[RMDB]
An RNA of 170 nucleotides, treated with 2A3 and DMS and read out base by base. Values cover nucleotides 27 to 129. DMS adducts were read by reverse transcription with MarathonRT. For DMS, 12,947 sequencing reads were counted. 2A3 is a SHAPE reagent: it acylates the 2'-hydroxyl of flexible nucleotides of all four kinds.

RNA sequence: GGGAACGACUCGAGUAGAGUCGAAAAUACUACAAAGUUCUACGGUGGCUGGGAUUUCAUGCUUAAAACAUUGUACAAAGAUGUUGAUAAUCCGCAUCUUAUGGGUUGGGAUUACCCUAAGUGUGAUAAAGGAGACUGUUCGCAGUCUCCAAAAGAAACAACAACAACAAC
Reactivity to 2A3 in 0.01 (KOAc 150mM, MgCl2 10mM, bicine 150mM(pH8.5), 24C), signal-to-noise 4, nucleotides 027 to 129: u170a040c030u030a030c030a040a140a060g080u070u030c010u060a060c050g040g010u030g000g000c020u060g020g030g030a010u000u050u040c000a000u060g040c010u030u040a010a080a000a020c040a080u090u220g040u060a010c050a020a080a040g060a000u070g000u070u040g020a060u130a110a070u010c010c000g000c010a000u000c040u020u060a100u210g020g000g030u060u040g060g000g040a020u110u080a020c010c000c000u000a030a020g030u000g000u010g030a120u050a150a070a000
Reactivity to DMS in 0.01 (KOAc 150mM, MgCl2 10mM, bicine 150mM(pH8.5), 24C), signal-to-noise 3, nucleotides 027 to 129: u040a130c080u040a150c120a090a150a140g010u000u020c040u000a090c170g040g000u010g010g030c020u000g010g000g000a080u010u000u000c050a050u020g020c040u000u080a080a040a060a080c050a040u000u000g030u040a120c210a050a080a120g030a060u020g000u000u040g030a100u080a000a000u020c080c060g050c000a030u020c040u010u030a000u000g000g020g060u000u000g010g030g000a110u060u080a000c000c010c010u010a000a100g040u000g010u040g000a100u000a020a090a170